The record gives the reactivity of an RNA of 207 nucleotides to 2A3. The 2A3 profile rests on 1,079 reads.
RNA sequence: GGGAACGACUCGAGUAGAGUCGAAAAAAUAAAAUUACUUCAGUUACAAAUAAGUGCUGUGAAGAUAAGAGUAGCUGGGGGAUAAGGAAGUAGCUUAUUCUUGGGUGGUUAGGCAUGGUCUCUCUGAGAAGGUGCUACUUCAUUGAGACCUGCUGGACUACGAUAGGAUGUUCGCAUCCUAUCGUAGAAAAGAAACAACAACAACAAC
Reactivity to 2A3 in 0.01 (KOAc 150mM, MgCl2 10mM, bicine 150mM(pH8.5), 24C), signal-to-noise 2, nucleotides 027 to 156: a010a000u210a030a040a010a010u120u040a070c020u070u030c010a010g030u070u070a050c020a060a300a200u120a270a010g040u060g030c070u050g050u070g090a050a080g000a070u130a090a090g010a030g030u050a020g000c030u020g010g010g030g010g000a030u050a080a040g030g030a020a000g030u040a010g010c040u070u080a050u210u050c010u120u080g040g000g000u060g050g040u090u080a070g020g020c030a020u080g000g000u000c000u000c010u000c000u020g050a050g030a150a020g060g070u190g080c020u060a050c000u050u000c000a010u010u020g010a000g000a010c000c000u000g020c010u000g010g000a020